RNA sequence: GGGAACGACUCGAGUAGAGUCGAAAACACACCAUUGCACUACAACCUGGGUGACAGAGUGAGACUCUGUCUCAAAACACACACACAUACUGAUUGUCAGUGGCCAGUAUUGCCUAAGUUGAAUUCAGCUUUAACUGGCAUUUGUUGAGCCCCUACACGCUACGCGUAAUUUCGAUUACGCGUAGCGAAAAGAAACAACAACAACAAC
Reactivity to 2A3 in 0.01 (KOAc 150mM, MgCl2 10mM, bicine 150mM(pH8.5), 24C), signal-to-noise 2, nucleotides 027 to 156: c090a000c000a010c040c010a090u060u160g050c010a040c050u070a080c040a030a080c000c000u070g010g000g020u010g000a010c010a010g030a010g010u100g120a060g040a190c000u000c010u020g000u020c010u000c000a040a060a090a010c080a020c000a000c000a020c020a020c020a110u170a210c050u120g060a170u130u120g040u070c040a030g070u070g020g020c000c000a000g000u040a060u080u000g030c040c000u100a140a010g030u060u000g110a060a060u210u140c050a030g000c050u030u040u000a070a060c040u040g000g000c010a010u060u050u070g000u000u010g010a040g000c000c020c000c000u000a000c040a000
Source: RMDB library OK3TST, as collected in RNAgym. Structure probing data (2A3) for a 207-nucleotide construct. The RNA was probed in 150 mM KOAc, 10 mM MgCl2 and 150 mM bicine (pH 8.5) at 24 C.